Structure probing data (DMS and 2A3) for a 177-nucleotide construct.
The reactions ran in a buffer of 150 mM KOAc, 10 mM MgCl2 and 150 mM bicine (pH 8.5), at 24 C.
For 2A3, 4,455 sequencing reads were counted.
[RMDB]
RNA sequence: GGGAACGACUCGAGUAGAGUCGAAAAGCCGGCCCAUUCAUGGAUAAUGCUAUUAAUGUUGGUGGUACAGGAUUACAGUAUGCCGCCAUUACUGCACCUUAUGUAGUUCUCACUGGCUUAGGUGAGUCGAGUAUUGAUAGUUCGCUAUCAAUACUCGAAAAGAAACAACAACAACAAC
Reactivity to DMS in 0.01 (KOAc 150mM, MgCl2 10mM, bicine 150mM(pH8.5), 24C), signal-to-noise 2, nucleotides 027 to 126: g020c010c040g010g000c030c010c010a110u030u000c060a080u000g010g000a110u000a110a130u010g010c050u010a070u010u000a040a040u000g020u000u000g010g040u000g010g020u000a050c080a110g010g010a190u020u010a090c130a060g020u010a050u000g030c010c030g000c120c010a040u000u010a020c080u000g000c040a060c090c020u010u020a040u000g010u010a050g010u000u000c020u000c030a060c060u010g040g020c110u000u000a060g010g030u000g000a040g020u000
Reactivity to 2A3 in 0.01 (KOAc 150mM, MgCl2 10mM, bicine 150mM(pH8.5), 24C), signal-to-noise 4, nucleotides 027 to 126: g020c010c010g020g000c000c020c010a070u080u080c050a040u070g020g000a040u040a180a030u170g020c030u070a030u140u050a100a040u090g050u070u050g000g000u040g050g000u020a020c020a040g060g090a190u160u160a080c010a010g040u050a010u060g010c010c010g010c000c000a010u010u020a020c000u000g010c000a030c020c030u070u090a080u160g070u040a050g040u090u010c020u000c000a020c010u030g030g020c020u080u090a060g000g010u020g010a010g030u030